The data come from the RNA Mapping Database (RMDB), library 15KLIB. An RNA of 170 nucleotides, treated with 2A3 and DMS and read out base by base. Conditions: 150 mM KOAc, 10 mM MgCl2 and 150 mM bicine (pH 8.5), 24 C.

RNA sequence: GGGAACGACUCGAGUAGAGUCGAAAAAAAGCAACGGGGCUAGCCGACGGGUGUUCCGCCUCCCGAGAGGGGACGAGUGAGGCUUAUCCCGGGGAACCCGGCGAAUCGUCCCCACAUAGCAGCUCCCAUCCUGAAACGUUCGCGUUUCAGAAAAGAAACAACAACAACAAC
Reactivity to 2A3 in 0.01 (KOAc 150mM, MgCl2 10mM, bicine 150mM(pH8.5), 24C), signal-to-noise 9, nucleotides 027 to 129: a000a000a010g100c060a080a020c080g010g000g010g020c010u040a040g020c010c010g060a040c030g030g010g010u060g070u160u080c020c010g030c040c020u060c000c010c000g090a090g030a040g020g000g000g000a020c010g000a030g080u210g040a040g050g020c030u040u100a100u130c000c010c030g010g000g000g020a040a070c020c000c010g000g000c050g010a030a070u030c010g010u020c000c000c020c010a030c000a010u100a000g000c010a010g010c000u060c000c000c010a050u060c000
Reactivity to DMS in 0.01 (KOAc 150mM, MgCl2 10mM, bicine 150mM(pH8.5), 24C), signal-to-noise 8, nucleotides 027 to 129: a020a020a030g020c120a160a120c160g020g000g040g050c070u000a080g000c030c020g000a100c070g020g010g020u040g040u020u030c100c080g030c100c010u000c000c010c020g040a160g000a110g000g040g030g000a060c000g040a060g010u040g000a100g010g030c080u050u070a110u000c110c010c020g110g000g040g000a100a080c030c000c000g070g010c060g020a060a060u000c030g040u040c000c000c000c000a060c130a030u060a120g000c010a070g010c050u090c010c020c030a090u070c050